RNA sequence: GGGAACGACUCGAGUAGAGUCGAAAAGAUAUGGACUCCGCGUAUUAAGUGAUGCACAUCGGAAACGAUGUGUCAUCUCAAAUACCGGAGUCCUAAGUCAAAAGCUUGCAUGUUCGCAUGCAAGCAACAAGUUAUAGCGCUUCGGCGCUAUAACUUGAAAAGAAACAACAACAACAAC
Reactivity to DMS in 0.01 (KOAc 150mM, MgCl2 10mM, bicine 150mM(pH8.5), 24C), signal-to-noise 1, nucleotides 027 to 126: g010a070u000a080u010g020g000a040c000u000c000c000g030c300g020u000a010u000u030a160a060g030u000g020a010u000g020c000a000c000a000u000c000g000g000a060a010a060c000g030a010u000g000u000g030u030c010a000u000c000u000c300a080a040a010u010a010c020c000g000g000a000g000u000c000c010u000a000a040g000u010c010a210a140a150a120g020c000u000u000g000c000a010u000g000u000u010c280g030c010a000u000g010c010a000a010g000c030a010a070